[RMDB]
RNA sequence: GGGAACGACUCGAGUAGAGUCGAAAAUAGUGAUCCGGUACAUGAUCCUAGAUAGUGAUCUCUCAUGGGAUCGUCAUGAGUGUGGAUCGAUCGGAUCCUAGCGUACCUAGGAUCCUAGGUACUCAUGACCUACACCCUGCUUCGGCAGGGUGUAGGUAAAAGAAACAACAACAACAAC
Reactivity to 2A3 in 0.01 (KOAc 150mM, MgCl2 10mM, bicine 150mM(pH8.5), 24C), signal-to-noise 1, nucleotides 027 to 126: u050a000g090u080g030a010u000c010c000g000g040u070a070c030a110u250g000a030u000c000c000u000a010g030a070u130a050g160u150g240a090u010c040u000c010u060c050a110u160g170g000g020a210u090c130g050u050c040a010u050g030a000g090u180g100u140g040g000a000u000c000g000a010u000c000g000g000a010u000c000c000u020a010g000c030g020u020a010c000c000u000a010g010g090a140u140c020c040u020a020g020g010u000a000c000u030c070a130u120g150
Reactivity to DMS in 0.01 (KOAc 150mM, MgCl2 10mM, bicine 150mM(pH8.5), 24C), signal-to-noise 1, nucleotides 027 to 126: u010a040g010u010g000a000u010c000c010g060g000u010a100c110a180u000g010a030u000c000c010u010a060g020a080u000a110g020u010g020a160u020c030u000c020u020c160a080u000g030g000g000a060u000c060g010u000c020a020u010g000a080g020u010g020u010g020g000a050u020c000g000a040u010c010g020g000a010u000c000c010u000a030g000c250g010u010a020c040c010u010a040g000g000a070u040c060c000u000a020g030g000u000a030c020u000c070a040u000g010